The record gives the reactivity of an RNA of 177 nucleotides to 2A3 and DMS. For DMS, 16,565 sequencing reads were counted. For 2A3, 8,661 sequencing reads were counted. Reactivities are given for positions 27 through 126.
RNA sequence: GGGAACGACUCGAGUAGAGUCGAAAACAGCAAUUAUUCGUAAUUGCUGAAUGGCGGACCCAGCGCGGAAGGAGCGCGCAGGACUCCUUCGCCGCGUUUUAAUAAGCAGGUACUUCGGUACCUGCAAUGCAAAUUAACAAUUCGUUGUUAAUUUGCAAAAAGAAACAACAACAACAAC
Reactivity to 2A3 in 0.01 (KOAc 150mM, MgCl2 10mM, bicine 150mM(pH8.5), 24C), signal-to-noise 4, nucleotides 027 to 126: c000a000g000c010a010a010u010u020a020u070u130c160g040u060a010a000u010u000g000c010u000g010a030a100u120g040g050c090g050g030a040c000c000c000a010g010c010g000c010g020g010a010a000g030g020a020g020c110g000c050g020c120a040g020g160a200c010u010c000c000u020u020c060g030c040c010g010c000g010u000u060u110u060a190a180u190a110a020g000c000a000g010g000u000a000c000u030u090c190g080g000u000a000c000c000u010g000c000a000a000
Reactivity to DMS in 0.01 (KOAc 150mM, MgCl2 10mM, bicine 150mM(pH8.5), 24C), signal-to-noise 8, nucleotides 027 to 126: c000a010g010c000a000a000u000u000a020u000u010c180g020u000a000a000u000u000g000c000u000g000a040a060u000g000g020c150g000g000a260c020c010c010a060g000c000g020c000g010g000a070a020g000g000a020g010c070g010c170g020c180a080g000g000a170c010u000c000c010u000u000c130g000c100c010g010c020g010u000u000u010u010a060a140u010a100a120g010c010a000g000g010u000a000c000u000u010c150g020g000u000a000c000c000u000g000c000a010a010
DMS adducts were read by reverse transcription with MarathonRT. The data come from the RNA Mapping Database (RMDB), library M2PK50.